[RMDB]
RNA sequence: GGGAACGACUCGAGUAGAGUCGAAAAACAAGCUCCAGUCUCAGAUUGUAACUGGCCUUUUUAAAGAUUGCUCUAGAGAAACUUCUGGCCUCUCACCUGCUUAUGCACCAACAUAUGUUAGUGUUGACACCGUAGGACUUCGGUCCUACGAAAAGAAACAACAACAACAAC
Reactivity to 2A3 in 0.01 (KOAc 150mM, MgCl2 10mM, bicine 150mM(pH8.5), 24C), signal-to-noise 9, nucleotides 027 to 129: a000c060a030a020g030c030u020c020c010a010g060u030c020u000c060a170g030a300u110u150g050u090a030a020c030u020g020g000c010c020u170u090u030u060u160a100a180a050g080a070u070u090g040c020u040c030u100a040g020a030g010a190a110a040c030u060u010c030u080g150g000c010c000u010c000u010c000a040c000c000u020g010c020u090u030a030u100g050c030a010c030c000a060a030c010a030u090a000u170g040u030u060a060g020u010g000u040u040g040a030c030a000c040
Reactivity to DMS in 0.01 (KOAc 150mM, MgCl2 10mM, bicine 150mM(pH8.5), 24C), signal-to-noise 7, nucleotides 027 to 129: a030c190a090a090g000c070u040c000c040a070g050u020c000u000c040a110g030a080u000u000g030u000a070a030c000u000g020g020c300c070u000u030u010u060u050a070a080a120g000a070u000u030g020c010u020c010u000a010g010a110g030a080a060a040c100u010u020c000u030g040g030c100c020u020c040u000c040a040c000c020u000g000c000u040u030a080u040g000c020a070c080c000a040a070c050a070u030a000u070g020u000u000a070g040u030g050u000u000g020a100c160a020c130

An RNA of 170 nucleotides, treated with 2A3 and DMS and read out base by base. For DMS the reverse transcriptase was MarathonRT. 2A3 adducts were read by reverse transcription with SuperScript II with manganese. For 2A3, 18,049 sequencing reads were counted. It was measured as part of the RMDB library 15KLIB.